[RMDB]
RNA sequence: GGGAACGACUCGAGUAGAGUCGAAAACAUCAAAGGUAUGUCGGAAUAAAGAUCGCCGGACGCUGGCGCGUCCACAUCGUGAACGAAUAUUCUGUUAAACAUGAUGGGUAUUUUGCUGGUGGACAUUUCGAACGGAGCGGCGGCUUUGUGUCGCUCCACCUCACGGAAAAUUCGUUUUCCGUGAGGUAAAAGAAACAACAACAACAAC
Reactivity to 2A3 in 0.01 (KOAc 150mM, MgCl2 10mM, bicine 150mM(pH8.5), 24C), signal-to-noise 1, nucleotides 027 to 156: c040a010u130c040a060a060a000g090g040u090a050u130g120u050c040g020g070a020a020u100a040a190a030g070a130u050c080g050c110c030g000g040a000c060g010c100u160g200g000c190g010c000g070u030c000c000a010c000a080u070c070g040u060g070a050a020c010g080a060a010u010a020u090u070c030u130g030u130u200a060a220a010c010a030u100g050a100u150g010g000g000u020a040u010u010u030u150g040c040u040g000g070u020g010g000a030c040a060u130u160u080c080g000a070a040c070g010g000a000g000c000g000g000c000g050g000c050u160u120u130g060u030g000u000c000g000c000u050c010c010